Notes:
Source: RMDB library OK1LIB, as collected in RNAgym. Chemical mapping of a 177-nucleotide RNA with DMS and 2A3.

RNA sequence: GGGAACGACUCGAGUAGAGUCGAAAAAUGUGUUUACGUGAGUUCCGGGGGGAGAGAACACGGAGGCCAGGAAGGCACUGGUGAUAGAAGCGCAGCGAUGGGUGGCUUUCCUUUAUGUGUACGUGAGCCCUCCAUACGUGUUCGCACGUAUGGAGGGAAAAGAAACAACAACAACAAC
Reactivity to DMS in 0.01 (KOAc 150mM, MgCl2 10mM, bicine 150mM(pH8.5), 24C), signal-to-noise 2, nucleotides 027 to 126: a040u020g010u010g000u020u000u000a050c070g040u020g070a180g040u000u000c020c030g050g000g070g000g000g000a070g010a070g020a040a050c060a060c070g010g000a030g000g000c050c050a100g000g000a150a040g010g010c010a040c010u020g020g000u000g000a170u030a160g000a130a110g020c120g000c020a140g000c130g000a100u050g010g030g010u040g010g020c040u000u020u020c000c000u030u000u000a050u010g030u000g000u020a050c140g000u000g000a090g000
Reactivity to 2A3 in 0.01 (KOAc 150mM, MgCl2 10mM, bicine 150mM(pH8.5), 24C), signal-to-noise 2, nucleotides 027 to 126: a000u140g080u020g010u060u080u120a030c060g030u050g040a080g020u040u090c000c000g000g040g000g000g040g000a080g000a000g020a070a000c040a000c160g030g030a090g010g000c000c010a030g080g000a010a030g010g010c020a020c030u090g090g020u080g050a020u050a090g040a070a050g050c000g080c080a050g020c050g050a100u120g050g050g000u040g060g010c000u010u010u040c020c020u070u200u000a120u210g150u010g020u010a020c100g020u050g030a060g000
The 2A3 profile rests on 1,079 reads.